This 177-nucleotide RNA was probed chemically with DMS and 2A3. For 2A3 the reverse transcriptase was SuperScript II with manganese. The 2A3 profile rests on 1,369 reads. Conditions: 150 mM KOAc, 10 mM MgCl2 and 150 mM bicine (pH 8.5), 24 C.
RNA sequence: GGGAACGACUCGAGUAGAGUCGAAAAUGAGCACAAAGAGUAGCAUAAGCUCUCCUUUGACAUCUUCACCAACCUCUCAUCGUUCCCUUCUCUGUAAUAACGUCGUUUUGCAAAACUGCAAUGGUCCCCUACAGUCUCAGUUCGCUGAGACUGUAGGAAAAGAAACAACAACAACAAC
Reactivity to DMS in 0.01 (KOAc 150mM, MgCl2 10mM, bicine 150mM(pH8.5), 24C), signal-to-noise 1, nucleotides 027 to 126: u030g010a100g040c100a140c220a000a000a070g000a020g010u010a020g050c000a170u000a130a210g020c000u000c010u000c050c020u000u000u000g020a060c010a000u000c050u010u000c030a030c070c110a070a060c060c020u000c000u010c020a150u010c000g000u000u000c000c000c000u000u000c020u000c040u030g000u010a090a040u010a050a100c140g000u000c040g020u000u000u010u010g000c030a000a030a020a130c140u000g000c020a050a080u010g000g000u000c040c050
Reactivity to 2A3 in 0.01 (KOAc 150mM, MgCl2 10mM, bicine 150mM(pH8.5), 24C), signal-to-noise 1, nucleotides 027 to 126: u010g000a050g070c060a020c090a120a020a000g060a000g040u270a000g000c040a080u100a300a120g020c010u020c010u030c010c050u000u000u020g040a050c020a010u020c030u030u020c000a010c050c000a060a040c020c020u020c020u010c000a020u000c010g010u030u000c000c060c000u060u060c010u010c000u030g090u090a110a070u060a140a010c050g040u020c050g000u010u000u070u080g000c020a000a090a110a260c090u030g000c000a000a050u070g150g090u050c010c000